[RMDB]
RNA sequence: GGGAACGACUCGAGUAGAGUCGAAAAAGAGCCGGAUACGUCCGGCUCAACGGGGGAUACGUGUGGUGCCGUCCGCUCCCUCUAUGGCAUAACAAAUGCACCACACACUAGGCUACGGCCUAGUGAAAAAAGGUGUAUGUGUUCGCACAUACACCAACCCCACUAUAGGGUUCGCCCUAUAGUGGGGAAAAGAAACAACAACAACAAC
Reactivity to 2A3 in 0.01 (KOAc 150mM, MgCl2 10mM, bicine 150mM(pH8.5), 24C), signal-to-noise 2, nucleotides 027 to 156: a000g030a020g030c020c000g000g000a010u030a050c170g110u040c000c010g000g070c010u000c000a000a000c020g000g000g000g000g000a000u000a070c010g030u070g000u010g000g010u000g010c030c030g000u020c030c040g080c040u010c020c110c000u000c050u030a190u180g200g000c130a130u110a200a040c070a090a150a050u080g000c000a000c000c000a000c000a000c000a000c000u000a000g020g000c010u020a020c230g160g000c000c010u010a000g000u000g050a020a000a010a000a000a030g000g010u000g020u000a000u000g010u000g020u000u030c200g040c070a000c000a000u000a000c000a000c000c000a000a000
This 207-nucleotide RNA was probed chemically with 2A3. The RNA was probed in 150 mM KOAc, 10 mM MgCl2 and 150 mM bicine (pH 8.5) at 24 C. The 2A3 profile rests on 917 reads.